[RMDB]
RNA sequence: GGGAACGACUCGAGUAGAGUCGAAAACAUGGGGAACUACAUCUGUGUCGCGAGUUCGAUUCUCGCCAGUGCCUGGUCCUGUAGCUCAGUUGGUAGAGCAAGCUGUUCCCCGGACACUUGUCGUCAUAAAAGUUGCCCCCGUUCGCGGGGGCAACAAGACCAAAUAUGUGUUCGCACAUAUUUGGUCAAAAGAAACAACAACAACAAC
Reactivity to DMS in 0.01 (KOAc 150mM, MgCl2 10mM, bicine 150mM(pH8.5), 24C), signal-to-noise 3, nucleotides 027 to 156: c050a150u000g030g020g050g050a060a050c030u010a070c030a040u000c060u000g000u010g000u000c050g050c000g030a060g000u000u000c050g000a300u000u000c010u000c000g030c010c050a090g010u000g000c040c060u020g040g020u000c050c070u000g000u000a060g030c050u000c030a120g010u000u000g020g030u010a100g010a080g010c050a080a060g020c050u000g000u010u010c000c000c000c020g000g000a080c030a040c160u000u000g020u000c040g000u020c050a120u000a070a080a100a160g030u010u010g020c000c000c020c000c020g040u000u000c170g050c050g000g030g000g090g040c000a000a000c020a030a080